[RMDB]
RNA sequence: GGGAACGACUCGAGUAGAGUCGAAAAGGCGAUCGAGAGGCCCUCUCAUUAAUGCGGAGCUGUCACGCUGACAGAAUGAUAUUAGAUGUCCGCUUCCGGUUGCAUCGCGGCGAUGAUUACAUAGGACAUCGAUUACCCAUUAGCUUCGGGGAAGCGAAUACCAGUAGUAUUUCGAUACUACUGGUAUAAAAGAAACAACAACAACAAC
Reactivity to DMS in 0.01 (KOAc 150mM, MgCl2 10mM, bicine 150mM(pH8.5), 24C), signal-to-noise 4, nucleotides 027 to 156: g010g000c030g020a080u000c030g010a100g020a240g040g030c040c020c020u000c080u000c040a120u010u000a100a160u000g020c050g010g000a160g010c020u010g000u000c030a140c100g030c120u000g040a150c050a050g010a070a070u010g000a080u000a100u000u000a090g010a110u000g010u000c000c010g020c050u000u000c030c030g010g030u000u000g020c020a140u000c070g020c030g020g000c090g020a040u000g000a120u000u000a140c100a110u000a110g020g010a090c010a040u010c010g000a090u000u000a090c030c000c020a100u000u000a170g010c070u000u000c060g030g000g010g000a080a060g030c030g020a120
Reactivity to 2A3 in 0.01 (KOAc 150mM, MgCl2 10mM, bicine 150mM(pH8.5), 24C), signal-to-noise 6, nucleotides 027 to 156: g030g020c020g030a080u030c080g030a050g030a030g160g010c020c050c000u020c000u010c010a110u080u180a110a040u160g040c050g050g000a030g010c020u000g010u060c010a030c130g100c140u090g010a000c010a020g070a050a080u130g070a050u030a090u150u120a080g030a050u030g030u040c040c030g000c000u050u020c020c010g000g000u020u050g010c040a040u070c050g010c040g100g060c030g020a010u020g030a040u040u240a070c060a060u190a100g070g030a000c000a000u010c010g000a000u020u100a040c000c020c010a030u100u040a030g050c070u040u060c070g050g000g000g010a020a000g000c010g020a020
An RNA of 207 nucleotides, treated with DMS and 2A3 and read out base by base.
DMS adducts were read by reverse transcription with MarathonRT.
The 2A3 profile rests on 4,382 reads.
The reactions ran in a buffer of 150 mM KOAc, 10 mM MgCl2 and 150 mM bicine (pH 8.5), at 24 C.